[RMDB]
RNA sequence: GGGAACGACUCGAGUAGAGUCGAAAAAAUUCUGGAACUAAUUACGUAGAGGAUAUGUCUCAAUUUGUUCUGCAUUGAUGCCGCAGCGGGGACGGGGGCCAGGCCAUGGCUGCUCAGAUACAUGGGCUCGACUCCACAAAUUCGUUUGUGGAGUCGAAAAAGAAACAACAACAACAAC
Reactivity to 2A3 in 0.01 (KOAc 150mM, MgCl2 10mM, bicine 150mM(pH8.5), 24C), signal-to-noise 2, nucleotides 027 to 126: a000a000u120u120c070u040g030g010a000a060c030u000a070a000u080u020a030c180g080u110a060g000a000g050g080a150u030a030u280g140u000c000u030c040a030a090u060u010u060g030u100u000c000u070g010c060a090u050u190g030a020u150g020c020c000g000c000a000g020c060g090g000g000g010a050c090g010g000g000g010g000c030c030a000g020g000c000c000a000u030g070g000c040u010g010c000u000c000a020g030a030u020a020c050a130u110g000g010g000c000
Reactivity to DMS in 0.01 (KOAc 150mM, MgCl2 10mM, bicine 150mM(pH8.5), 24C), signal-to-noise 1, nucleotides 027 to 126: a040a060u010u020c010u020g010g030a070a050c060u050a010a080u080u020a080c120g020u000a120g020a080g000g000a050u050a090u010g000u010c030u000c090a110a030u010u010u000g000u050u020c010u000g050c090a030u000u000g020a040u010g010c100c040g040c060a030g000c080g020g000g000g020a080c060g000g020g000g010g000c040c000a020g000g020c050c080a020u000g000g010c040u000g000c000u010c030a020g000a170u000a030c160a020u000g010g000g000c010